[RMDB]
RNA sequence: GGGAACGACUCGAGUAGAGUCGAAAACAAGUUGGCUUCGGCCAACUUGAAAAGAAUGGUAGACUGAGAGCGCUAAACUCAGAUAACCAAAAAUAGCGGAAAAAAGAUCAGUGUUCGCACUGAUCAAGGUUAUAUCGAAGUUCGCUUCGAUAUAACCAAAAGAAACAACAACAACAAC
Reactivity to DMS in 0.01 (KOAc 150mM, MgCl2 10mM, bicine 150mM(pH8.5), 24C), signal-to-noise 3, nucleotides 027 to 126: c030a010a000g010u000u000g010g000c010u010u010c200g030g000c000c000a000a010c000u010u000g000a060a060a120a130g010a120a130u000g020g030u000a090g010a230c000u000g000a000g000a100g000c060g000c020u020a030a100a080c000u000c000a010g020a170u010a050a120c080c020a020a020a020a080a130u010a010g010c030g020g040a000a060a040a090a130a120g010a000u000c000a000g010u000g010u000u010c220g000c000a000c000u000g000a000u000c000a050a040
Reactivity to 2A3 in 0.01 (KOAc 150mM, MgCl2 10mM, bicine 150mM(pH8.5), 24C), signal-to-noise 3, nucleotides 027 to 126: c010a000a000g010u000u000g020g000c010u050u120c300g080g010c010c000a000a000c000u000u000g000a000a010a000a020g070a060a040u110g020g050u100a040g040a180c000u020g000a000g010a020g070c060g010c100u060a060a070a030c000u010c010a000g020a140u170a070a060c010c000a070a020a020a000a000u060a030g020c020g050g060a050a100a000a000a030a010g010a010u000c000a000g000u020g040u070u080c160g000c090a000c010u000g000a000u000c000a000a010